[RMDB]
RNA sequence: GGGAACGACUCGAGUAGAGUCGAAAAAAAAAAGAUAUGGACUGAUGGAGACUCAUGUACUACCCACCUAUCUUCGGAAACGAAGAUAGAGGUACGAGUCUAUGAAGUCAGUCCUAAGUCAAAAAAAGAUUGAAUGAAAGUUCGCUUUCAUUCAAUCAAAAGAAACAACAACAACAAC
Reactivity to 2A3 in 0.01 (KOAc 150mM, MgCl2 10mM, bicine 150mM(pH8.5), 24C), signal-to-noise 1, nucleotides 027 to 126: a040a000a000a000a000a010g120a070u220a140u160g000g030a000c010u000g010a010u000g040g080a000g000a020c000u030c010a090u300g000u040a010c000u070a090c000c030c030a010c020c000u020a020u000c030u020u000c010g010g030a060a070a040c000g000a000a000g000a000u000a000g000a000g000g020u010a000c030g000a000g000u000c000u020a300u060g060a000a000g000u000c000a000g000u000c010c000u010a040a040g020u000c060a060a110a050a050a030a010a160
Reactivity to DMS in 0.01 (KOAc 150mM, MgCl2 10mM, bicine 150mM(pH8.5), 24C), signal-to-noise 1, nucleotides 027 to 126: a020a050a140a050a110a080g050a170u010a300u000g040g000a050c010u010g010a010u000g000g000a020g000a010c000u030c020a050u000g040u000a000c050u000a070c040c020c050a300c150c000u010a000u010c000u010u000c000g000g000a100a130a250c020g000a000a000g000a000u000a000g020a110g000g040u000a000c040g010a020g050u000c000u000a170u000g000a130a270g000u000c000a040g010u000c000c000u000a000a040g000u010c040a000a000a050a120a100a010a120
Background:
An RNA of 177 nucleotides, treated with 2A3 and DMS and read out base by base. Reactivities are given for positions 27 through 126. For 2A3, 1,687 sequencing reads were counted. Conditions: 150 mM KOAc, 10 mM MgCl2 and 150 mM bicine (pH 8.5), 24 C. For 2A3 the reverse transcriptase was SuperScript II with manganese.